[RMDB]
RNA sequence: GGGAACGACUCGAGUAGAGUCGAAAAAAAAAAAGAUAUGGAGACAUGAGCCGAAGCAACGAUGAAAUAAAUCGGAAACGAUUUAUGGAGUUGUGAUAGCUGCUCAACAGCUCCUAAGUCAAAAAAACUUAAUAGGUAACUUCGGUUACCUAUUAAGAAAAGAAACAACAACAACAAC
Reactivity to DMS in 0.01 (KOAc 150mM, MgCl2 10mM, bicine 150mM(pH8.5), 24C), signal-to-noise 1, nucleotides 027 to 126: a010a020a150a020a050a070a120g010a020u000a300u000g050g010a020g000a040c040a110u000g000a010g000c060c170g000a060a170g020c000a020a000c010g030a020u000g010a220a100a000u000a000a000a020u010c000g010g000a170a010a170c020g050a000u000u010u000a000u000g010g000a210g020u000u000g000u010g030a150u010a110g000c100u010g000c000u000c040a010a010c220a110g000c010u020c020c000u040a040a190g010u010c010a000a000a090a010a060a270a180